Record summary: An RNA of 207 nucleotides, treated with 2A3 and DMS and read out base by base. Values are in units of 0.01, from 0 to 300, in steps of 10. The reactions ran in a buffer of 150 mM KOAc, 10 mM MgCl2 and 150 mM bicine (pH 8.5), at 24 C. For 2A3, 1,849 sequencing reads were counted.
RNA sequence: GGGAACGACUCGAGUAGAGUCGAAAAAGGUGGGCCUUGCCCUGGCCGUAGAAGGGAUUGACAAGCCCGAAGAUUUCAUAGGCGAUGGCUCCCACUGCCCAGGCAUCAGCCUUGCUGUAGUCAAUCACUGCCCUGGGGCCAGGACGGGCCGUGGACACAGUCAGUCAUAGUUCGCUAUGACUGACUGAAAAGAAACAACAACAACAAC
Reactivity to 2A3 in 0.01 (KOAc 150mM, MgCl2 10mM, bicine 150mM(pH8.5), 24C), signal-to-noise 3, nucleotides 027 to 156: a000g170g010u180g010g000g020c040c030u070u300g010c000c010c000u020g000g000c030c030g300u000a000g040a020a030g000g010g000a000u020u020g010a010c030a080a040g040c020c110c120g080a120a010g060a070u190u290u190c130a120u140a110g020g000c020g020a010u030g040g030c070u100c030c020c020a120c110u080g000c030c010c000a000g020g000c000a030u020c040a030g010c000c010u030u080g000c010u080g030u200a110g000u010c000a000a020u010c040a020c150u050g020c000c080c040u050g060g000g030g010c000c070a000g000g010a020c020g000g000g000c000c000g020u020g010g020a000c030a000
Reactivity to DMS in 0.01 (KOAc 150mM, MgCl2 10mM, bicine 150mM(pH8.5), 24C), signal-to-noise 1, nucleotides 027 to 156: a100g000g040u000g020g020g000c020c010u000u000g020c010c000c030u000g020g030c000c050g030u000a070g010a110a100g010g020g020a050u020u010g010a050c030a190a210g000c000c050c020g000a120a100g030a140u010u020u010c070a170u000a110g030g040c020g010a040u000g010g010c060u000c000c020c020a130c070u000g000c040c000c010a250g010g010c060a100u010c050a120g060c040c020u000u000g020c000u000g010u000a170g020u000c020a060a030u010c010a100c030u010g030c080c030c010u000g030g020g030g020c030c000a010g020g000a040c010g020g010g010c010c010g030u000g000g000a090c110a190
It was measured as part of the RMDB library OK3TST.